[RMDB]
RNA sequence: GGGAACGACUCGAGUAGAGUCGAAAAUAGUGCACUGUCGCAUGGCAGCGCCCAGCCAGCGCAAAGCGGUCCUGUCAACUCUUGUUGGCAGGUACGGCCGCCGUACCAAAUUGUACGAGGCCGCACAUAUACUACUCUGGUUCGCCAGAGUAGUAUAAAAAGAAACAACAACAACAAC
Reactivity to 2A3 in 0.01 (KOAc 150mM, MgCl2 10mM, bicine 150mM(pH8.5), 24C), signal-to-noise 6, nucleotides 027 to 126: u090a010g080u040g020c030a000c110u070g020u170c050g050c210a200u060g030g000c010a030g040c020g080c020c000c000a010g010c000c010a040g020c010g000c050a070a090a030g070c080g040g040u050c000c000u000g000u000c010a000a010c010u120c100u300u300g010u010u010g000g000c000a000g000g000u010a010c000g010g000c000c000g090c100c010g000u000a000c030c040a170a220a300u220u200g010u000a000c000g000a040g010g000c010c020g000c020a020c010a010
Reactivity to DMS in 0.01 (KOAc 150mM, MgCl2 10mM, bicine 150mM(pH8.5), 24C), signal-to-noise 8, nucleotides 027 to 126: u000a100g010u000g010c030a110c080u000g010u010c030g020c100a120u000g020g020c010a070g020c120g000c010c020c030a100g000c020c020a140g000c020g000c090a050a080a090g020c070g010g010u000c010c000u000g000u000c000a010a010c010u010c270u000u010g020u010u000g000g010c010a010g000g000u000a010c040g000g010c010c010g000c180c000g010u000a010c010c210a090a110a190u010u010g010u000a010c000g010a300g000g000c010c020g010c050a020c100a190